This 207-nucleotide RNA was probed chemically with 2A3 and DMS. The DMS profile rests on 1,950 reads. The 2A3 profile rests on 1,069 reads.

RNA sequence: GGGAACGACUCGAGUAGAGUCGAAAAAAACUCAAGUUAAACAACUUGCCCAAAGUCGCACAAUGACUAUGUGGUGAGGCUGAGACUUGAGUCCACGUAUACCUCAGAAUAUUUCCGCCCUUCCUCUGCUCUUCUCAUUCCUGAGGUGCCUUAGGAAUCCAUCCACCAUAUUCGUAUGGUGGAUGGAAAAAGAAACAACAACAACAAC
Reactivity to 2A3 in 0.01 (KOAc 150mM, MgCl2 10mM, bicine 150mM(pH8.5), 24C), signal-to-noise 2, nucleotides 027 to 156: a000a000a000c010u010c000a000a020g010u040u030a250a060a110c010a020a060c000u000u000g010c000c000c010a070a100a000g010u000c020g060c100a190c100a300a180u280g010a000c000u020a030u170g130u210g010g000u030g000a010g100g020c100u040g010a010g010a050c000u000u000g000a000g010u010c010c010a060c030g030u090a110u080a120c010c020u050c050a030g140a150a020u100a140u090u120u000c100c080g010c030c000c030u000u020c040c010u050c020u050g030c010u020c000u090u100c000u000c020a030u060u030c030c010u040g010a010g000g050u060g010c010c010u030u020a040g070g080a050a020
Reactivity to DMS in 0.01 (KOAc 150mM, MgCl2 10mM, bicine 150mM(pH8.5), 24C), signal-to-noise 1, nucleotides 027 to 156: a030a040a030c000u010c010a010a030g000u000u000a040a120a120c010a020a060c010u010u010g040c000c010c000a060a090a010g020u000c010g060c180a200c250a260a110u010g000a000c070u000a120u000g010u040g010g010u030g000a030g010g000c110u010g030a300g000a070c000u000u020g010a040g020u000c020c040a090c030g050u000a150u010a060c010c010u000c060a110g010a080a100u000a060u000u020u010c050c010g000c080c030c030u000u010c010c010u000c020u000g010c000u000c050u000u000c040u000c050a140u020u000c010c020u010g000a020g010g060u000g000c060c020u010u000a140g030g000a120a180